[RMDB]
Record summary
Chemical mapping of a 177-nucleotide RNA with 2A3 and DMS. The DMS profile rests on 12,686 reads. 2A3 adducts were read by reverse transcription with SuperScript II with manganese. Values cover nucleotides 27 to 126. The reactions ran in a buffer of 150 mM KOAc, 10 mM MgCl2 and 150 mM bicine (pH 8.5), at 24 C.
RNA sequence: GGGAACGACUCGAGUAGAGUCGAAAACACCCGGUACGGGGCGCCGCCUCCGCGCUGAUCGCCGGCGAUCAGCCGUCGACGUGGACGUGGGGGCCGCGCUGUGCGGUCAGCUGGUCGCCGUGGCGAAACCUCAUGAUUUAUUCGUAAAUCAUGAGGUAAAAGAAACAACAACAACAAC
Reactivity to 2A3 in 0.01 (KOAc 150mM, MgCl2 10mM, bicine 150mM(pH8.5), 24C), signal-to-noise 3, nucleotides 027 to 126: c040a040c000c000c010g000g060u060a020c020g020g010g090g000c040g060c060c060g020c010c000u000c000c000g000c010g000c070u140g080a300u030c010g010c010c000g000g000c000g040a300u300c140a030g000c020c010g020u020c010g010a130c070g070u160g100g070a050c010g000u080g010g040g020g010g000c010c000g000c000g000c020u020g070u070g040c000g030g000u040c030a050g040c040u120g030g000u010c000g020c040c020g030u040g020g010c050g000a130a020
Reactivity to DMS in 0.01 (KOAc 150mM, MgCl2 10mM, bicine 150mM(pH8.5), 24C), signal-to-noise 5, nucleotides 027 to 126: c140a220c030c010c000g020g010u010a040c040g010g000g000g010c020g010c090c300g000c050c010u000c010c000g040c030g000c040u000g000a270u000c000g030c030c000g000g000c000g000a220u020c300a200g000c080c000g010u000c010g010a040c100g020u010g010g000a070c020g020u010g000g000g010g000g010c010c100g000c010g020c040u010g010u010g010c010g020g010u000c050a150g000c070u000g000g010u000c010g020c010c020g020u010g010g000c010g000a090a120